Background
Structure probing data (2A3 and DMS) for a 177-nucleotide construct. The 2A3 profile rests on 5,100 reads. Reactivities are rounded to 0.1 and cut off at 0 and 3.

[RMDB]
RNA sequence: GGGAACGACUCGAGUAGAGUCGAAAAUCAUUAACAGGGAUGAGUAAUCGUCGUUAUUUUUUACAGCAUUUGGCUUUGAUUCUGGAUAAUGAAGAUGAAUUUAUACCUGGUUAUGUCAUGAUGCUGAAUAAUGGUAAAUCUUCGGAUUUACCAUUAUAAAAGAAACAACAACAACAAC
Reactivity to 2A3 in 0.01 (KOAc 150mM, MgCl2 10mM, bicine 150mM(pH8.5), 24C), signal-to-noise 5, nucleotides 027 to 126: u050c000a000u040u080a040a040c030a040g100g030g030a020u040g010a020g060u130a070a060u030c020g050u000c010g030u050u040a070u040u110u010u020u080u100a030c010a000g000c000a030u050u040u120g110g020c040u140u050u120g050a060u220u090c060u080g010g000a010u000a050a010u060g030a030a050g060a100u110g050a080a140u030u070u020a030u040a050c010c010u020g080g000u030u050a030u040g010u010c010a010u130g090a010u060g040c020u000g010a030
Reactivity to DMS in 0.01 (KOAc 150mM, MgCl2 10mM, bicine 150mM(pH8.5), 24C), signal-to-noise 8, nucleotides 027 to 126: u010c030a050u000u010a060a070c040a080g000g010g010a030u000g010a060g000u010a140a050u000c030g020u000c020g010u000u000a000u000u000u000u010u020u010a150c060a020g010c020a130u000u000u010g020g010c030u010u010u010g010a060u000u010c110u000g000g000a040u000a010a010u000g010a050a070g000a090u000g010a090a080u000u000u000a020u000a090c010c000u010g010g000u000u000a030u000g010u000c150a050u000g010a030u000g010c060u010g010a150
The reactions ran in a buffer of 150 mM KOAc, 10 mM MgCl2 and 150 mM bicine (pH 8.5), at 24 C.